[RMDB]
RNA sequence: GGGAACGACUCGAGUAGAGUCGAAAAACAGAUGCUUCACUAACUGAAUACUUAGUGGAAAUGGCAUAUUCCUGGAAAUGACUGUGUGUCAUUUGGGUAGAAUUGUGUGGUUUGGAUUCAGUGUAAGAAUCACCUGCAAGUUCGCUUGCAGGUGAUUAAAAGAAACAACAACAACAAC
Reactivity to DMS in 0.01 (KOAc 150mM, MgCl2 10mM, bicine 150mM(pH8.5), 24C), signal-to-noise 1, nucleotides 027 to 126: a090c120a080g000a060u000g020c030u000u000c010a020c000u000a020a000c140u020g030a120a080u010a090c220u000u000a000g010u000g000g000a060a080a120u000g010g000c000a010u000a080u010u000c000c000u010g010g000a050a020a020u010g020a040c020u000g040u010g020u020g030u000c010a020u000u000u020g010g010g020u010a070g010a080a110u000u000g000u000g020u010g010g000u000u000u000g020g000a060u020u000c030a060g010u020g000u010a060a150g010
Chemical mapping of a 177-nucleotide RNA with DMS. The RNA was probed in 150 mM KOAc, 10 mM MgCl2 and 150 mM bicine (pH 8.5) at 24 C. For DMS, 1,923 sequencing reads were counted.